[RMDB]
RNA sequence: GGGAACGACUCGAGUAGAGUCGAAAAAGCGUCCGUACGCGGACGCAAUUUGAAAUGGUUCAGCUCCUAUUCAAGGCGCGGUUUGAUUAGGACUUGCAUUUCAAAUACGUGCCUUACGAGGCACGAAGGAGGCAACGCUUUUCGAAGCGUUGCCUCCAAAAGAAACAACAACAACAAC
Reactivity to 2A3 in 0.01 (KOAc 150mM, MgCl2 10mM, bicine 150mM(pH8.5), 24C), signal-to-noise 1, nucleotides 027 to 126: a010g080c060g000u000c000c000g000u020a000c180g020c000g050g000a000c000g000c010a000a000u000u000u000g000a010a000a000u020g220g000u070u100c080a040g020c090u000c000c000u010a020u010u000c000a000a000g080g080c060g040c090g080g000u000u000u000g000a000u000u000a000g020g000a020c010u040u110g000c000a000u000u000u000c000a000a000a000u070a000c000g000u020g000c000c000u090u040a080c220g070a000g000g000c000a000c000g000a000a020
Notes
Chemical mapping of a 177-nucleotide RNA with 2A3. It was measured as part of the RMDB library RFM100. Conditions: 150 mM KOAc, 10 mM MgCl2 and 150 mM bicine (pH 8.5), 24 C.